Annotation: Structure probing data (2A3) for a 207-nucleotide construct.
RNA sequence: GGGAACGACUCGAGUAGAGUCGAAAAGGCAUUCUUAGAGCGGAGGAGACUGCGUGAGGCUGGUUUCACAGAGCAGCGUCCACCUCCCGCUUUCGACGGUGGAAGGAUCACGGGCCGGUGCCUUCUGAGCCCACUAUGACCUAAUAAGCUGGUUUCACCAAUCGUACAUCUUCGGAUGUACGAUUGGAAAAGAAACAACAACAACAAC
Reactivity to 2A3 in 0.01 (KOAc 150mM, MgCl2 10mM, bicine 150mM(pH8.5), 24C), signal-to-noise 1, nucleotides 027 to 156: g020g010c000a010u000u040c110u160u100a020g040a000g040c020g040g010a000g050g000a020g010a040c040u180g040c090g060u080g010a060g040g090c110u090g010g020u110u230u300c060a060c010a050g100a050g070c020a000g020c040g090u020c000c040a020c050c000u020c090c000c000g000c020u040u080u060c040g090a090c110g000g000u020g020g020a090a010g050g010a040u100c020a000c110g000g110g010c000c090g060g030u010g060c010c070u030u000c010u020g010a060g020c000c000c000a010c060u090a120u100g080a100c010c020u040a070a110u030a200a000g050c110u110g020g070u000u030u020c020a020
The data come from the RNA Mapping Database (RMDB), library ARCHII.
The 2A3 profile rests on 547 reads.
Values cover nucleotides 27 to 156.